Structure probing data (DMS and 2A3) for a 170-nucleotide construct.
RNA sequence: GGGAACGACUCGAGUAGAGUCGAAAACCUCUCGAGUUCCUCCUUUCUUCUUCUUCCAUCGAUCCACUUUCCGAGUGCCUCUUCUCUCCCCCUCCGGGUUCUCCUCGCAUCGGACUGGCUCAUUCUCUAAGUAGUAACUUCGGUUACUACAAAAGAAACAACAACAACAAC
Reactivity to DMS in 0.01 (KOAc 150mM, MgCl2 10mM, bicine 150mM(pH8.5), 24C), signal-to-noise 9, nucleotides 027 to 129: c020c010u030c030u030c040g030a000g000u010u030c100c040u030c030c040u000u030u000c030u000u000c010u000u000c040u010u010c000c050a130u020c070g030a090u040c020c040a080c020u020u030u030c030c030g000a110g020u010g020c030c020u000c060u010u000c040u000c010u010c000c030c010c050c020u000c010c000g020g000g050u010u010c020u010c000c000u010c030g000c070a060u000c060g000g010a060c070u000g000g030c030u020c000a080u010u000c010u030c010u040a070a180
Reactivity to 2A3 in 0.01 (KOAc 150mM, MgCl2 10mM, bicine 150mM(pH8.5), 24C), signal-to-noise 9, nucleotides 027 to 129: c010c000u010c010u010c020g040a020g030u060u050c010c010u020c010c010u060u050u020c020u030u000c000u050u010c000u060u020c020c020a110u060c030g070a060u030c050c020a070c040u070u070u030c020c030g030a030g030u080g050c010c000u020c000u060u010c020u000c000u020c010c000c000c000c010u010c010c000g030g000g000u050u020c010u000c000c000u010c010g030c010a070u040c010g020g010a040c030u030g020g010c010u010c020a080u090u000c030u000c000u010a180a040

Record summary
The RNA was probed in 150 mM KOAc, 10 mM MgCl2 and 150 mM bicine (pH 8.5) at 24 C. The 2A3 profile rests on 75,900 reads. 2A3 adducts were read by reverse transcription with SuperScript II with manganese.